The record gives the reactivity of an RNA of 177 nucleotides to 2A3 and DMS. The RNA was probed in 150 mM KOAc, 10 mM MgCl2 and 150 mM bicine (pH 8.5) at 24 C. It was measured as part of the RMDB libraries RFM100 and RFMREP. 2A3 adducts were read by reverse transcription with SuperScript II with manganese.
[RMDB]
RNA sequence: GGGAACGACUCGAGUAGAGUCGAAAAAGAAUAACUUCAUUCUGAAUCAAUGAAAAGACUUCUGUCCUCUUGCCAUUGGAUAUAUGUUAUCUGCACUUACAGAAUUGAAAUUUGUACAUCAAAGGAACAACUAGAUUAAGUUCGCUUAAUCUAGUUGAAAAGAAACAACAACAACAAC
Reactivity to 2A3 in 0.01 (KOAc 150mM, MgCl2 10mM, bicine 150mM(pH8.5), 24C), signal-to-noise 9, nucleotides 027 to 126: a000g080a020a050u100a080a030c040u030u020c010a020u040u010c030u070g080a070a090u160c050a030a060u070g060a030a040a030a050g040a020c030u070u020c050u140g050u030c010c000u030c030u040u070g060c030c020a060u040u070g050g020a000u010a010u010a020u150g090u090u040a040u050c040u040g040c040a030c060u050u110a030c030a030g080a070a100u090u080g040a070a090a050u100u060u070g070u050a060c030a070u100c070a090a070a050g050g000a050a040
Reactivity to DMS in 0.01 (KOAc 150mM, MgCl2 10mM, bicine 150mM(pH8.5), 24C), signal-to-noise 9, nucleotides 027 to 126: a050g000a050a030u010a100a160c100u000u000c020a020u000u000c050u000g020a170a110u020c260a030a030u010g000a020a040a060a090g010a120c170u000u000c040u010g010u000c010c010u000c090u010u010g010c080c040a080u000u000g010g010a060u010a040u010a040u010g010u000u010a060u000c020u000g000c090a070c120u000u010a060c040a040g000a050a060u010u010g000a060a060a090u010u010u000g010u000a060c140a060u010c070a040a060a100g000g010a090a170